[RMDB]
Structure probing data (2A3) for a 207-nucleotide construct. The reactions ran in a buffer of 150 mM KOAc, 10 mM MgCl2 and 150 mM bicine (pH 8.5), at 24 C. For 2A3, 768 sequencing reads were counted. Source: RMDB library ARCHII, as collected in RNAgym.

RNA sequence: GGGAACGACUCGAGUAGAGUCGAAAAGAUGCAUGCCGAGAGCGCAUUUUCUCUCGUAAAUCAAAUUUGCAUAUUUUAGUCGCAAACGACGAAUCUUACGCUCUAGCUGCCUAAGGGCAGCUUGUCCGCUUCACUGAAUACUUGUGGUCAGUGGACCCCUGUACACACCGUUCGCGGUGUGUACAGGAAAAGAAACAACAACAACAAC
Reactivity to 2A3 in 0.01 (KOAc 150mM, MgCl2 10mM, bicine 150mM(pH8.5), 24C), signal-to-noise 2, nucleotides 027 to 156: g120a010u170g020c050a010u080g030c020c010g020a020g020a000g020c050g000c050a050u040u010u020u070c000u000c010u010c040g130u170a020a060a000u030c070a010a010a010u010u020u000g000c050a020u020a220u040u150u050u130a070g050u020c070g010c130a230a150a190c040g010a000c000g040a030a030u030c070u090u120a030c090g020c000u020c010u060a000g000c000u000g010c030c000u050a070a190g000g000g020c000a030g000c000u010u050g000u000c000c010g000c010u060u030c000a000c010u060g050a130a050u110a170c060u010u080g040u050g080g040u050c010a000g000u040g000g000a010c010c000